[RMDB]
RNA sequence: GGGAACGACUCGAGUAGAGUCGAAAAUGGUUUCGACGUGUUGGUGAAUCCUUCACCGUGAUUCAGGCCGAGAGGGAGUCCACUCUCGUAAAUCCAGGCUCAACCAAAAGUAACUGCGAACAACAUCGUUCCUUUCGCUCGUAAGGCUGCUCCUGUACACUUCCUUAAGGUUCGCCUUAAGGAAGUGAAAAGAAACAACAACAACAAC
Reactivity to 2A3 in 0.01 (KOAc 150mM, MgCl2 10mM, bicine 150mM(pH8.5), 24C), signal-to-noise 6, nucleotides 027 to 156: u130g040g010u010u030u030c030g030a020c040g040u060g010u050u080g030g030u090g090a070a080u140c020c020u060u080c050a050c050c040g010u060g020a050u050u070c070a040g110g000c020c000g010a000g000a000g000g030g000a010g020u010c020c020a050c020u000c000u000c010g020u070a000a000a040u020c020c010a010g010g000c000u010c020a070a110c050c040a090a040a030a010g070u080a080a070c050u080g020c030g040a030a020c040a040a030c000a160u050c030g020u020u040c010c000u020u080u060c040g010c040u070c070g090u080a050a030g050g000c010u020g000c020u050c030c010u000g010u050a030
Reactivity to DMS in 0.01 (KOAc 150mM, MgCl2 10mM, bicine 150mM(pH8.5), 24C), signal-to-noise 3, nucleotides 027 to 156: u010g010g010u000u000u000c010g030a020c060g040u000g010u000u000g000g060u000g000a090a110u000c060c050u000u010c020a060c050c010g010u010g000a070u000u000c070a080g000g030c110c020g000a070g000a060g010g000g000a080g000u000c060c070a030c010u000c020u010c020g030u000a020a050a090u000c050c040a120g020g000c030u000c040a090a140c070c030a060a110a070a140g000u010a060a080c050u020g020c020g030a050a060c090a090a100c060a090u000c030g000u000u010c000c010u000u000u000c050g030c060u000c090g000u010a100a090g020g010c000u000g030c010u000c010c020u000g020u000a250